[RMDB]
RNA sequence: GGGAACGACUCGAGUAGAGUCGAAAACUGAUUUCGAUCAGAGUCAUCCGUAGGACCCGGUAAUUCAUCGUGGGAGAUGCAGCCACUUCGAAAGAGGUGGACAUCGAAGAACACGAUGUGCCAGGGUCCUAAACGGGAUAUCCAUAUUCGUAUGGAAUUAACGUGAUGUAUUCGUACAUCACGUUAAAAAAGAAACAACAACAACAAC
Reactivity to 2A3 in 0.01 (KOAc 150mM, MgCl2 10mM, bicine 150mM(pH8.5), 24C), signal-to-noise 6, nucleotides 027 to 156: c030u040g010a050u070u150u140c210g110a050u030c030a040g020a040g140u100c040a100u090c020c000g000u010a010g000g010a010c000c020c030g000g020u140a230a260u180u120c000a000u000c000g000u010g010g000g010a050g000a000u010g020c020a020g050c010c000a000c020u010u010c000g060a130a060a070g000a000g030g010u000g010g000a000c000a000u000c010g050a190a020g010a020a000c000a000c000g000a000u000g010u010g000c010c010a070g010g010g020u000c000c000u000a000a010a000c000g020g010g000a050u060a060u100c000c010a000u020a010u030u120c180g060u050a010u040g040g030a070a070
Reactivity to DMS in 0.01 (KOAc 150mM, MgCl2 10mM, bicine 150mM(pH8.5), 24C), signal-to-noise 4, nucleotides 027 to 156: c050u000g010a060u010u000u000c140g020a070u000c050a110g020a170g010u000c030a090u000c020c010g020u010a030g010g010a020c000c010c010g000g000u000a060a080u000u000c000a000u000c000g040u000g000g010g010a260g010a020u000g000c040a300g010c010c010a010c000u010u000c010g000a200a140a220g010a030g020g030u000g010g010a100c000a000u000c000g000a100a210g000a100a190c010a040c000g000a020u000g000u000g000c010c000a160g060g020g000u000c010c000u000a000a010a070c000g010g010g020a080u000a070u000c010c000a020u000a050u000u000c230g010u000a020u000g010g000a050a300
Structure probing data (2A3 and DMS) for a 207-nucleotide construct. The reactions ran in a buffer of 150 mM KOAc, 10 mM MgCl2 and 150 mM bicine (pH 8.5), at 24 C. For DMS the reverse transcriptase was MarathonRT. It was measured as part of the RMDB library RNAMAK.